[RMDB]
Chemical mapping of a 170-nucleotide RNA with DMS and 2A3. The DMS profile rests on 2,879 reads. For 2A3, 1,430 sequencing reads were counted. Source: RMDB library 15KLIB, as collected in RNAgym.
RNA sequence: GGGAACGACUCGAGUAGAGUCGAAAACUCUCCUCGUCGGUGAAUCCUCCCCCGGGGGGCCUCUUCCUAGGUCCGGAGUCUAUCUCCAUCUGGUCCGUUCGGGCCCUCUUCGCCGGGGGAGCCCCCUAUACUGGCGCCUUCGGGCGCCAGAAAAGAAACAACAACAACAAC
Reactivity to DMS in 0.01 (KOAc 150mM, MgCl2 10mM, bicine 150mM(pH8.5), 24C), signal-to-noise 1, nucleotides 027 to 129: c030u000c000u000c000c000u000c090g100u000c000g020g050u020g000a000a000u030c110c000u000c040c000c000c010c010g010g020g060g000g010g030c000c040u010c080u090u000c020c050u000a140g010g010u010c000c110g010g000a040g000u040c300u040a070u030c030u040c080c000a180u060c090u030g000g040u000c050c030g010u010u000c230g000g000g000c000c000c150u020c020u140u000c110g000c030c000g000g050g020g000g000a000g050c060c000c000c000c010u000a110u000a170
Reactivity to 2A3 in 0.01 (KOAc 150mM, MgCl2 10mM, bicine 150mM(pH8.5), 24C), signal-to-noise 1, nucleotides 027 to 129: c000u030c000u000c000c010u050c000g080u000c000g000g110u090g020a030a100u050c000c000u010c000c000c000c000c000g000g000g000g000g000g010c000c030u010c020u110u040c030c090u070a100g020g050u070c030c000g000g000a000g000u000c050u210a090u020c070u000c040c040a130u030c010u020g000g030u080c030c000g030u040u180c110g000g000g000c000c060c000u000c000u020u020c010g000c000c000g000g020g020g010g000a000g040c000c000c000c000c000u100a060u030a130